[RMDB]
RNA sequence: GGGAACGACUCGAGUAGAGUCGAAAAGAUAUGGACGCUACACUUCGCUCCCUAUACUCGGAAACGAGUAUACCAGAACUACGAAGUGGGCGUCCUAAGUCAAAAUCCUACCCUUCGGGGUAGGAAACUUUUAGUGUAAGUUCGCUUACACUAAAAGAAAAGAAACAACAACAACAAC
Reactivity to DMS in 0.01 (KOAc 150mM, MgCl2 10mM, bicine 150mM(pH8.5), 24C), signal-to-noise 7, nucleotides 027 to 126: g010a040u000a300u000g000g000a010c000g000c000u000a110c000a010c000u000u010c000g010c080u000c050c070c120u000a000u000a000c000u000c000g000g000a120a080a180c000g010a020g010u000a000u000a010c150c180a080g010a050a070c120u010a130c020g010a010a020g020u000g000g000g000c000g000u000c000c000u000a000a050g010u000c030a080a070a090a140u000c000c000u010a000c000c000c010u000u010c220g020g010g000g000u000a000g000g000a000a010a040
Reactivity to 2A3 in 0.01 (KOAc 150mM, MgCl2 10mM, bicine 150mM(pH8.5), 24C), signal-to-noise 5, nucleotides 027 to 126: g020a020u060a020u100g010g010a000c010g040c020u300a210c130a010c010u020u010c020g050c120u090c030c020c000u010a000u000a000c000u000c000g000g030a030a040a020c000g010a000g000u000a000u000a000c000c030a080g060a180a090c170u270a130c300g000a010a000g000u000g000g010g000c000g000u000c000c000u000a010a000g010u010c010a000a000a000a250u000c000c000u000a000c010c010c000u020u090c300g120g000g000g000u000a010g000g000a010a010a000
Background
The record gives the reactivity of an RNA of 177 nucleotides to DMS and 2A3. For DMS, 10,268 sequencing reads were counted. The RNA was probed in 150 mM KOAc, 10 mM MgCl2 and 150 mM bicine (pH 8.5) at 24 C. For 2A3, 17,484 sequencing reads were counted. 2A3 adducts were read by reverse transcription with SuperScript II with manganese. DMS adducts were read by reverse transcription with MarathonRT.